The data come from the RNA Mapping Database (RMDB), library M2RFPK. Chemical mapping of a 207-nucleotide RNA with 2A3.
RNA sequence: GGGAACGACUCGAGUAGAGUCGAAAAAGUGAGUAUGGCUCGUUACGACGAGGCAUACUCACAACGGUUUUCCUAAAUCGUCGUGAGACGGACCUUGGAAAACCUAGUAUUUAAAUAACUAGGUCAAAUUAGCCUAGAUCCUUCGGGAUCUAGGCAACCCAUACGCGUCGUUCGCGACGCGUAUGGGAAAAGAAACAACAACAACAAC
Reactivity to 2A3 in 0.01 (KOAc 150mM, MgCl2 10mM, bicine 150mM(pH8.5), 24C), signal-to-noise 2, nucleotides 027 to 156: a010g010u000g020a000g000u000a030u010g040g130c010u000c020g000u010u030a100c300g020a000c000g000a050g030g010c000a000u000a020c000u000c000a000c000a000a000c000g050g000u010u030u000u010c000c000u000a000a000a010u050c010g000u000c000g030u040g120a170g000a040c010g000g000a010c000c000u000u020g010g010a000a000a000a000c000c000u000a030g020u000a040u060u150u100a090a210a160u110a060a050c090u060a000g000g000u010c000a010a070a150u130u250a090g000c010c000u000a000g000a000u020c000c000u010u110c180g080g000g000a000u000c000u000a000g000g000c000a000a000
Record summary: The RNA was probed in 150 mM KOAc, 10 mM MgCl2 and 150 mM bicine (pH 8.5) at 24 C.